[RMDB]
RNA sequence: GGGAACGACUCGAGUAGAGUCGAAAAGUAGAAAUAUGCUUAAAUUCGAACGUGUCAUUGACAUUUUCAAUAAGAAAAACAACGGAGCAUGGAAUUUCUGCCCGCAAAACGCCGGUUAUUGGGAACACGUAAGGAUGAGGUUCGCCUCAUCCUUACGAAAAGAAACAACAACAACAAC
Reactivity to 2A3 in 0.01 (KOAc 150mM, MgCl2 10mM, bicine 150mM(pH8.5), 24C), signal-to-noise 1, nucleotides 027 to 126: g060u050a000g010a030a050a040u110a020u000g000c000u030u040a080a180a090u170u070c080g020a020a010c040g000u050g060u030c100a300u060u300g010a010c020a020u030u000u030u080c040a060a100u170a230a210g090a050a160a010a110a020c060a110a000c090g190g000a040g000c020a040u050g140g000a090a000u070u040u000c000u020g000c000c000c000g110c020a060a130a090a010c070g070c070c030g220g000u150u140a110u210u170g000g010g000a000a030c070a000
Reactivity to DMS in 0.01 (KOAc 150mM, MgCl2 10mM, bicine 150mM(pH8.5), 24C), signal-to-noise 1, nucleotides 027 to 126: g010u010a040g010a030a100a010u000a050u000g020c000u000u000a080a150a080u000u000c110g030a010a000c120g010u000g000u000c000a230u000u030g020a020c020a070u010u000u030u000c000a150a030u000a060a210g030a030a050a070a180a130c130a080a150c240g000g000a030g000c000a010u000g020g000a170a220u000u000u020c010u000g000c020c020c060g010c160a050a030a040a130c180g020c020c030g000g020u000u000a100u000u000g000g000g020a040a080c210a070
Record summary: Structure probing data (2A3 and DMS) for a 177-nucleotide construct. Values cover nucleotides 27 to 126. For DMS the reverse transcriptase was MarathonRT. The 2A3 profile rests on 596 reads. It was measured as part of the RMDB library OK2TST.